This 177-nucleotide RNA was probed chemically with DMS and 2A3. The DMS profile rests on 1,393 reads. Reactivities are given for positions 27 through 126. DMS adducts were read by reverse transcription with MarathonRT. For 2A3 the reverse transcriptase was SuperScript II with manganese.

[RMDB]
RNA sequence: GGGAACGACUCGAGUAGAGUCGAAAAUGCUAUGAUGUCGUAAUUUGCGUCUUACUCCACAUCAUGCGACAGUUGCCUGCUGUCAUUAAGCUGGUGUGGGUGACUGACGAAUAUCGCGUUCUGAGCACUCAGGAGCUUGGUUCGCCAAGCUCCUGAGAAAAGAAACAACAACAACAAC
Reactivity to DMS in 0.01 (KOAc 150mM, MgCl2 10mM, bicine 150mM(pH8.5), 24C), signal-to-noise 1, nucleotides 027 to 126: u010g000c000u010a020u020g010a010u000g000u030c040g000u020a060a110u040u010u000g000c010g000u000c000u000u010a140c110u000c040c000a000c050a010u010c010a010u100g020c000g000a000c000a060g000u000u120g000c200c300u110g000c040u000g000u000c010a020u040u060a150a240g000c000u000g000g000u000g000u000g050g000g000u000g000a150c300u000g000a030c000g000a090a080u040a100u100c120g010c000g000u010u020c000u010g030a110g020c000a140
Reactivity to 2A3 in 0.01 (KOAc 150mM, MgCl2 10mM, bicine 150mM(pH8.5), 24C), signal-to-noise 4, nucleotides 027 to 126: u050g000c020u030a020u150g030a020u060g110u200c000g040u060a020a200u030u090u120g090c000g010u000c000u140u260a300c040u020c030c000a010c000a010u000c000a010u300g000c010g000a000c000a000g030u120u200g280c020c100u130g000c000u010g030u000c000a020u100u240a170a070g010c030u000g000g000u000g010u000g010g000g020u000g030a080c100u070g000a010c010g000a010a020u090a060u090c060g000c000g060u050u000c070u050g140a010g000c000a020